[RMDB]
RNA sequence: GGGAACGACUCGAGUAGAGUCGAAAAGUAUUCGCGCAGAUGGCCGCGAACUCGGAGUUCACGAUCUUCCGCGUGUCCGGCCUCGCGACGAACCAGGCGCUGCGCUCGCUCGUGAAGAUCGGCGUGACGACGAGCUGCUAUUCGUAGCAGCUCGUCGAAAAGAAACAACAACAACAAC
Reactivity to DMS in 0.01 (KOAc 150mM, MgCl2 10mM, bicine 150mM(pH8.5), 24C), signal-to-noise 1, nucleotides 027 to 126: g020u010a190u000u000c000g030c020g000c030a110g020a030u000g000g050c060c010g000c110g000a070a030c030u000c030g000g000a010g010u020u010c160a150c290g010a090u010c070u000u000c030c010g010c110g050u000g010u020c070c000g000g030c000c030u000c070g030c000g000a120c030g000a060a060c090c040a140g000g000c060g000c040u000g000c070g010c060u010c020g020c120u010c000g050u000g030a140a120g010a020u000c000g030g000c030g010u000g020a160
Reactivity to 2A3 in 0.01 (KOAc 150mM, MgCl2 10mM, bicine 150mM(pH8.5), 24C), signal-to-noise 1, nucleotides 027 to 126: g020u020a120u000u080c040g000c000g000c100a070g010a180u170g050g000c030c000g090c120g000a040a040c010u000c010g030g010a010g030u170u170c130a040c010g200a220u080c020u180u060c030c000g010c000g000u060g300u020c020c000g020g000c020c020u010c000g020c000g000a150c020g020a010a000c000c000a030g090g000c060g000c060u090g000c030g030c030u110c050g010c000u030c000g070u110g200a070a040g030a100u000c010g030g000c020g000u040g060a020